[RMDB]
RNA sequence: GGGAACGACUCGAGUAGAGUCGAAAAAAAAGGAAAUUCAUGGUAAGCCUGCGUAUUUUCUUAUUUCGGGUGCGAGGGGAGUGGAGAAAUCCGUCAUGGAUAAAAUCCAACUUUAAUGACAGUCUGAAGCCCUGAAGCACAGACAUAUUGCAGAGCAAUCGACCAUACUAUUCGUAGUAUGGUCGAUAAAAGAAACAACAACAACAAC
Reactivity to DMS in 0.01 (KOAc 150mM, MgCl2 10mM, bicine 150mM(pH8.5), 24C), signal-to-noise 1, nucleotides 027 to 156: a030a070a080a030g010g000a030a050a110u010u000c030a110u010g000g020u000a070a150g040c080c000u000g000c060g060u000a040u000u000u010u000c020u020u010a190u010u000u000c050g030g000g030u010g030c040g000a170g000g020g020g000a100g000u010g000g000a050g000a100a130a030u010c010c000g050u020c170a070u000g010g000a030u000a060a030a030a300u030c020c020a030a120c030u010u020u030a050a140u000g000a180c050a090g030u010c090u000g000a090a210g000c000c020c020u010g000a050a140g020c030a100c060a030g000a000c180a080u000a030u000u030g010c040a100g000a210g020c060a080
Reactivity to 2A3 in 0.01 (KOAc 150mM, MgCl2 10mM, bicine 150mM(pH8.5), 24C), signal-to-noise 1, nucleotides 027 to 156: a000a000a000a000g250g040a210a090a070u180u080c080a190u130g020g010u080a040a000g000c000c010u030g000c030g000u050a070u140u060u010u020c080u060u140a240u110u120u060c010g150g000g000u070g030c040g000a080g030g020g020g000a030g040u050g000g010a040g010a030a120a020u030c040c000g170u270c170a160u220g050g050a000u000a050a150a060a060u060c000c000a000a100c070u050u130u080a080a020u080g050a040c000a000g040u030c010u070g110a190a000g000c000c000c000u050g030a040a000g040c040a000c010a010g000a000c000a000u100a000u030u250g020c030a000g040a010g160c020a000
An RNA of 207 nucleotides, treated with DMS and 2A3 and read out base by base. For 2A3 the reverse transcriptase was SuperScript II with manganese. The data come from the RNA Mapping Database (RMDB), library OK3TST. The RNA was probed in 150 mM KOAc, 10 mM MgCl2 and 150 mM bicine (pH 8.5) at 24 C. The DMS profile rests on 2,133 reads.